[RMDB]
RNA sequence: GGGAACGACUCGAGUAGAGUCGAAAAGGAGCUCGAUGCUAGAAUUUUCCAUCACCACAUGGAAGGGCUACAUUACGUUAGUAAUGUAGCACCAGGAUAUGGUGAUCCUGGAUUCUAGCAUCGAGGAGAUACGGUACAUAUUCGUGUGUGUUGUAUCAAAAGAAACAACAACAACAAC
Reactivity to 2A3 in 0.01 (KOAc 150mM, MgCl2 10mM, bicine 150mM(pH8.5), 24C), signal-to-noise 9, nucleotides 027 to 126: g120g010a070g060c000u000c000g000a000u000g000c000u000a000g000a010a010u020u030u010u000c010c000a010u040c040a040c090c010a050c020a060u010g000g010a010a010g020g010g000c000u000a000c000a000u000u000a000c020g180u130u250a070g000u060a000a000u000g000u000a000g000c000a000c000c000a000g000g000a010u050a080u220g300g020u080g020a000u000c000c000u000g000g000a000u000u000c000u000a000g000c000a000u000c000g000a000g000g000a010
Reactivity to DMS in 0.01 (KOAc 150mM, MgCl2 10mM, bicine 150mM(pH8.5), 24C), signal-to-noise 9, nucleotides 027 to 126: g010g010a160g020c000u000c010g000a010u000g010c000u000a010g000a010a000u000u010u000u000c010c020a020u010c220a140c200c160a100c240a100u010g000g000a030a020g000g000g000c000u000a010c000a000u000u000a000c000g010u040u060a080g000u000a010a000u000g000u000a000g010c000a020c000c000a010g000g000a020u000a100u030g020g030u020g010a050u000c010c030u000g000g000a040u000u000c000u000a000g000c000a000u000c000g000a000g010g010a080